[RMDB]
RNA sequence: GGGAACGACUCGAGUAGAGUCGAAAAUGCUGUAACUCUAUACUGGUCUGUGGUAUUACUUCCACUUUGGAGCCAUGUACUUCUAAUAAAAUGUGUCAGAGAAGAAUGCAAAGUUUGAGUCAUUGUAUCUACCCAGAAUUGUAUAUUAUAACUGUUACCACGACGAUUAUUUCGAUAAUCGUCGUGGAAAAGAAACAACAACAACAAC
Reactivity to 2A3 in 0.01 (KOAc 150mM, MgCl2 10mM, bicine 150mM(pH8.5), 24C), signal-to-noise 1, nucleotides 027 to 156: u070g000c000u030g010u070a100a080c000u000c010u070a030u010a120c040u030g090g000u120c090u150g030u180g000g020u060a040u140u050a180c000u270u050c020c000a070c030u030u230u200g000g010a040g000c000c010a060u040g040u030a090c000u030u030c010u030a040a110u130a100a260a160a260u090g090u150g030u130c070a000g010a010g010a150a040g010a070a000u010g060c000a100a050a050g000u060u170u060g030a010g010u000c000a030u090u100g000u010a040u010c130u030a030c010c030c030a000g060a030a040u150u200g060u060a040u030a000u240u210a150u150a290a060c030u080g100u100u000a000